[RMDB]
RNA sequence: GGGAACGACUCGAGUAGAGUCGAAAAGAACCAGUGUUCGCACUGGUUCAAACCUGACAAGGGAGUCAGGAAAGUGUGCGAAAAGCACACUUAAACUCCGUAAAACCGUGAGCUUCGGCUCACGGAAGUAACAGUUCACGUUCGCGUGAACUGUUACAAAAGAAACAACAACAACAAC
Reactivity to DMS in 0.01 (KOAc 150mM, MgCl2 10mM, bicine 150mM(pH8.5), 24C), signal-to-noise 1, nucleotides 027 to 126: g000a010a030c010c000a010g020u000g000u010u070c240g080c000a020c000u000g000g030u010u020c000a040a050a210c030c000u030g000a120c100a110a140g000g000g010a070g000u000c050a000g020g000a100a030a060g010u000g000u000g000c000g000a070a010a110a140g020c000a010c000a010c000u000u000a010a120a050c090u000c000c010g010u100a040a060a100a180c000c000g000u010g010a000g040c010u000u000c250g050g000c000u000c000a000c010g000g000a000a050